[RMDB]
RNA sequence: GGGAACGACUCGAGUAGAGUCGAAAAGGUGCCAUUCGUCGCUGUAUUUGCCGCCAUUAAAGAAUGAGGCGCUGGCGCGCAGCAUGGUAUCGGAUGCGCCAUUUUGGCCGUUCAGCGGCAACUGCUGCACCCUAUAAAGGUUCGCCUUUAUAGGGUGAAAAGAAACAACAACAACAAC
Reactivity to 2A3 in 0.01 (KOAc 150mM, MgCl2 10mM, bicine 150mM(pH8.5), 24C), signal-to-noise 9, nucleotides 027 to 126: g010g010u040g060c060c010a030u040u040c030g050u040c100g030c020u020g030u090a150u070u170u130g030c030c010g000c010c000a060u150u200a170a130a090g150a090a130u200g040a080g100g010c090g000c130u060g030g000c020g000c030g000c030a010g010c010a030u080g090g000u100a060u150c030g000g010a030u040g010c020g010c020c010a040u090u140u060u100g100g000c010c010g010u070u110c060a040g030c000g000g020c020a040a020c040u090g010c010u040g010
Reactivity to DMS in 0.01 (KOAc 150mM, MgCl2 10mM, bicine 150mM(pH8.5), 24C), signal-to-noise 9, nucleotides 027 to 126: g010g020u000g000c080c020a070u000u000c050g010u000c110g010c020u000g010u000a060u010u000u000g020c020c020g010c010c070a100u010u010a090a110a140g010a090a080u010g010a120g020g010c040g020c160u000g000g010c070g010c100g010c040a040g020c100a040u000g010g010u000a090u000c060g010g000a040u000g000c060g000c000c000a110u000u000u000u000g010g010c020c020g010u000u000c090a100g000c010g010g010c030a060a050c100u000g000c060u010g000